[RMDB]
RNA sequence: GGGAACGACUCGAGUAGAGUCGAAAACGCAAGGUAGGUUCGCCUACCUUGCGAAAAAGAUAUGGAAACUCUACCGCUCGCGAAGAACUCGGAAACGAGGGAGCGAUGUAGCUCGUUUCCUAAGUCAAAAAGCACGCCUACUUCGGUAGGCGUGCAACCGUAACAAACUGUUCGCAGUUUGUUACGGAAAAGAAACAACAACAACAAC
Reactivity to 2A3 in 0.01 (KOAc 150mM, MgCl2 10mM, bicine 150mM(pH8.5), 24C), signal-to-noise 2, nucleotides 027 to 156: c000g020c000a000a000g030g000u010a000g000g090u050u030c230g120c010c000u000a000c000c000u000u000g000c000g000a000a000a000a000a000g030a030u070a010u110g040g050a010a050a000c080u030c000u150a030c010c000g030c020u010c000g070c000g110a240a070g030a130a000c000u000c000g020g040a110a040a000c000g010a010g030g000g000a010g030c020g000a020u180g020u000a040g000c150u050c140g000u020u020u000c010c000u000a090a000g060u080c030a030a090a000a030a000g040c060a000c010g010c020c000u020a010c010u010u000c090g100g010u010a010g000g060c020g000u020g000c010a010a000
An RNA of 207 nucleotides, treated with 2A3 and read out base by base. Values cover nucleotides 27 to 156. For 2A3, 1,151 sequencing reads were counted. Conditions: 150 mM KOAc, 10 mM MgCl2 and 150 mM bicine (pH 8.5), 24 C.